[RMDB]
RNA sequence: GGGAACGACUCGAGUAGAGUCGAAAACGUUAGGCUGGGCUGUUAGAUGCAAUAUUCUGGCCUGCCCACUCCAAGUUGAGAGUUGGACCGUGGGGCUUGGGCGAAGGCCCUUGUCUCUCGGCCCCUAAACUGGAGGGCAAAGCGUGAGGCUGGUUUCGUUCUAGUUCCUGUUCGCAGGAACUAGAACAAAAGAAACAACAACAACAAC
Reactivity to 2A3 in 0.01 (KOAc 150mM, MgCl2 10mM, bicine 150mM(pH8.5), 24C), signal-to-noise 1, nucleotides 027 to 156: c040g040u080u050a030g010g060c070u060g030g000g040c050u030g070u150u070a100g030a150u090g080c010a090a020u060a050u220u090c000u020g000g000c040c050u020g000c030c020c000a120c010u030c010c020a180a070g020u000u020g060a030g000a030g060u140u200g000g090a270c000c040g000u020g000g000g000g050c000u010u000g000g000g020c010g130a120a020g140g000c000c000c000u000u000g000u020c000u000c000u010c020g000g000c010c010c010c000u030a000a000a000c000u000g020g000a000g000g020g000c040a060a100a010g040c020g010u060g080a040g110g040c020u090g040g110u000u030u090c040